[RMDB]
RNA sequence: GGGAACGACUCGAGUAGAGUCGAAAAAUCCAAACUGAAGCAUUUGUAACUAUCAGUCCUCAACAAAUGACACUUCUCAUGGGUAUUAUUUCUCGCUUUGUGGCCGAAUGGAUUGAGUACAUCAAAAUCCCACGCUAAAUUUCGAUUUAGCGUGGGAAAAAGAAACAACAACAACAAC
Reactivity to DMS in 0.01 (KOAc 150mM, MgCl2 10mM, bicine 150mM(pH8.5), 24C), signal-to-noise 1, nucleotides 027 to 126: a080u000c000c010a000a070a230c140u000g010a050a060g000c050a030u000u000u010g030u000a070a110c060u000a060u010c020a080g000u000c000c000u000c050a220a070c110a040a030a060u000g000a170c170a080c040u030u000c000u000c100a080u000g010g030g060u000a020u000u000a060u000u030u020c010u000c010g000c130u000u000u000g020u010g000g030c000c070g030a070a060u000g000g000a060u000u000g000a080g040u020a160c070a080u000c130a050a030a060a140

This 177-nucleotide RNA was probed chemically with DMS. Source: RMDB library OK2TRN, as collected in RNAgym. High DMS reactivity at an A or C suggests that its Watson-Crick edge is free. Values cover nucleotides 27 to 126. The RNA was probed in 150 mM KOAc, 10 mM MgCl2 and 150 mM bicine (pH 8.5) at 24 C. The DMS profile rests on 649 reads.